Source: RMDB library M2PK50, as collected in RNAgym. This 177-nucleotide RNA was probed chemically with DMS. The reactions ran in a buffer of 150 mM KOAc, 10 mM MgCl2 and 150 mM bicine (pH 8.5), at 24 C. For DMS, 5,833 sequencing reads were counted.
RNA sequence: GGGAACGACUCGAGUAGAGUCGAAAAUGGUGCCCGUUCGCGGGCACCACCUCGUGGUUAGGGCCACGUAAAAUAGUUGCUUAAGCCCUAAGCGUUGAUAAAGAUGCGCGAAAUUCGUUUCGCGCAAACUAAAUUUUGUAUUCGUACAAAAUUUAGUAAAAGAAACAACAACAACAAC
Reactivity to DMS in 0.01 (KOAc 150mM, MgCl2 10mM, bicine 150mM(pH8.5), 24C), signal-to-noise 4, nucleotides 027 to 126: u000g010g020u000g010c010c000c000g030u000u020c180g030c010g020g010g010c000a000c010c000a010c010c000u000c000g020u000g000g000u000u000a020g000g000g010c010c010a040c030g010u010a020a010a020a030u000a030g000u000u010g020c120u000u000a120a190g010c000c000c000u000a020a050g000c090g020u000u000g010a090u010a050a070a090g000a130u000g000c000g010c010g010a010a010a040u000u010c180g020u000u000u000c000g010c010g020c000a000a020